[RMDB]
RNA sequence: GGGAACGACUCGAGUAGAGUCGAAAACAUCUUUCCUCCCUACACAGUGACUCCAACUUGGGAGGGGCAGGGCUAGGCUGAGCCAGCACUCCCUGUGGUGUCUGCCUGCCACGUGCAGCUCUGGAGUAAAACCUGGAGAAGUUCGCUUCUCCAGGAACAGAUAAUUUCUCUUCGGAGAAAUUAUCUGAAAAGAAACAACAACAACAAC
Reactivity to 2A3 in 0.01 (KOAc 150mM, MgCl2 10mM, bicine 150mM(pH8.5), 24C), signal-to-noise 4, nucleotides 027 to 156: c010a080u120c060u100u120u090c000c010u030c030c010c010u120a090c160a020c040a110g050u030g080a030c010u000c010c000a030a030c060u050u050g000g000g000a000g010g000g020g010c010a000g020g000g020c040u300a010g030g000c000u030g030a030g160c060c020a030g040c010a020c020u080c010c010c020u020g020u020g020g010u030g100u030c030u010g000c010c010u020g000c030c020a120c140g110u140g000c020a030g000c030u050c060u090g000g000a000g010u020a000a040a000a050c010c000u010g020g000a000g000a000a000g010u050u140c170g020c110u000u010c000u000c000c000a000g000g000a000a000
Reactivity to DMS in 0.01 (KOAc 150mM, MgCl2 10mM, bicine 150mM(pH8.5), 24C), signal-to-noise 1, nucleotides 027 to 156: c080a100u000c070u000u020u000c020c000u000c040c010c000u010a130c110a150c150a150g020u020g000a100c040u000c000c020a050a230c090u000u000g050g020g000a060g050g020g010g010c020a020g000g030g000c000u000a070g010g000c030u000g010a250g030c020c040a100g000c030a070c030u010c010c030c050u000g010u000g010g040u010g000u010c040u000g000c020c000u000g000c010c010a050c100g000u000g020c040a140g020c040u000c030u010g000g000a070g000u000a110a070a110a180c020c060u000g000g000a020g000a020a020g030u000u010c300g020c000u000u000c000u000c000c000a000g000g000a010a050

An RNA of 207 nucleotides, treated with 2A3 and DMS and read out base by base. The RNA was probed in 150 mM KOAc, 10 mM MgCl2 and 150 mM bicine (pH 8.5) at 24 C.